[RMDB]
RNA sequence: GGGAACGACUCGAGUAGAGUCGAAAAGGUGGCCAAAACGUGAAUGGCUUCCAGCAGGCUGGUCUUGCCGCUGCCGUUUUGGCCGUGGAUGAGAUUGAAGCCAGGUGCGAGAUCCAGCGUGACUGCGUCGGCACUAAUAUUUCGAUAUUAGUGCCGAAAAAGAAACAACAACAACAAC
Reactivity to 2A3 in 0.01 (KOAc 150mM, MgCl2 10mM, bicine 150mM(pH8.5), 24C), signal-to-noise 4, nucleotides 027 to 126: g160g050u110g020g000c000c010a010a000a010a020c040g070u150g170a160a090u070g030g000c000u020u010c020c010a000g000c020a030g090g000c010u070g000g180u140c080u170u130g000c000c020g000c020u020g030c020c010g020u040u020u020u080g000g000c000c000g000u020g010g020a190u110g010a070g030a080u090u150g030a020a010g000c000c010a020g050g060u130g020c030g020a040g010a060u060c020c000a050g050c050g080u100g040a060c030u050g010c020g040
Reactivity to DMS in 0.01 (KOAc 150mM, MgCl2 10mM, bicine 150mM(pH8.5), 24C), signal-to-noise 6, nucleotides 027 to 126: g010g010u010g010g020c000c000a010a010a030a030c020g020u010g010a130a120u010g010g010c010u000u000c010c020a040g020c020a060g030g010c000u000g010g010u000c160u000u010g010c010c020g020c050u000g000c050c000g000u000u000u000u000g010g010c010c020g010u000g010g010a080u010g000a150g010a150u020u000g010a040a030g010c000c010a070g000g010u010g010c060g010a100g000a080u010c040c030a080g010c090g010u000g000a130c080u010g010c110g010